RNA sequence: GGGAACGACUCGAGUAGAGUCGAAAACACAGGAUCGUGUGGAAGUCCUGCCCGGGGCGGAAGCAUUAAAACCAUUCGAGCUAGUCAAUGCGUGGCGUGUCUCUCCGCAGCGUGUUGGCGAAUGUAACAAGCUGCCUCUCGUUCGCGAGAGGCAGAACCGAGUUUAUAUGUUCGCAUAUAAACUCGGAAAAGAAACAACAACAACAAC
Reactivity to 2A3 in 0.01 (KOAc 150mM, MgCl2 10mM, bicine 150mM(pH8.5), 24C), signal-to-noise 3, nucleotides 027 to 156: c160a000c010a030g140g050a080u120c050g020u040g000u020g040g030a060a010g000u010c010c010u020g090c010c030c020g000g010g000g020c020g020g010a040a000g020c020a020u050u250a050a070a060a070c040c020a030u070u080c080g000a030g060c070u100a010g060u020c010a020a010u010g010c010g020u040g030g000c010g030u100g080u030c070u020c020u000c130c010g000c010a010g010c000g000u020g010u000u000g000g000c020g010a030a040u080g030u120a030a120c080a100a050g040c000u000g000c000c000u000c010u000c000g020u090u020c170g020c030g090a000g010a000g000g000c000a000g000a000a000
Reactivity to DMS in 0.01 (KOAc 150mM, MgCl2 10mM, bicine 150mM(pH8.5), 24C), signal-to-noise 1, nucleotides 027 to 156: c130a120c030a010g000g000a030u000c050g010u000g020u000g020g010a210a180g000u000c020c000u000g000c030c070c050g000g020g030g040c010g040g000a230a190g000c020a120u000u000a060a110a080a130c030c030a090u000u000c020g000a060g000c050u000a160g000u000c050a020a010u000g000c000g000u000g000g080c040g000u000g000u000c080u010c130u000c230c000g000c000a040g020c020g010u000g000u000u000g010g030c060g030a040a030u000g020u000a060a060c070a070a100g040c010u000g050c000c000u000c010u010c000g020u000u010c290g020c030g000a020g000a010g040g050c000a000g000a020a040